[RMDB]
RNA sequence: GGGAACGACUCGAGUAGAGUCGAAAACAAAGAUUCGUUCCGAAGAACAGCUUCACGUAAGGCUCUGGCUGUCUCGGACGCUUGUGGUCUUACCUCGAACAUUCUAUGCAGUUCUGCACCAUGUUCCGAGGGUCUGAAUUUUCGAAUUCAGACCCUCAAAAGAAACAACAACAACAAC
Reactivity to DMS in 0.01 (KOAc 150mM, MgCl2 10mM, bicine 150mM(pH8.5), 24C), signal-to-noise 2, nucleotides 027 to 126: c070a080a090a110g000a120u010u010c020g020u010u010c010c010g020a040a050g000a130a070c060a040g000c020u000u000c040a080c260g000u010a080a060g010g060c130u020c020u010g000g010c000u010g040u020c030u020c120g000g000a020c130g010c190u000u000g030u010g010g020u000c040u000u000a120c060c020u000c110g000a010a030c100a020u010u000c070u020a140u010g030c010a070g010u000u010c130u000g000c050a030c280c220a040u010g030u020u000c070c120
Reactivity to 2A3 in 0.01 (KOAc 150mM, MgCl2 10mM, bicine 150mM(pH8.5), 24C), signal-to-noise 2, nucleotides 027 to 126: c010a000a130a030g050a130u050u090c030g050u090u020c000c000g060a080a040g010a080a020c030a030g020c000u130u140c130a060c070g080u110a140a030g080g000c050u040c040u080g060g000c050u100g020u050c030u030c040g110g000a000c010g000c010u160u170g100u110g100g030u000c000u000u020a050c000c020u000c000g020a050a010c000a030u090u000c070u190a090u080g010c000a000g090u280u150c100u100g000c010a000c040c010a040u090g020u080u030c010c040
An RNA of 177 nucleotides, treated with DMS and 2A3 and read out base by base. In probing experiments dimethyl sulfate is read out at A N1 and C N3, which are open when not base-paired. The reactions ran in a buffer of 150 mM KOAc, 10 mM MgCl2 and 150 mM bicine (pH 8.5), at 24 C.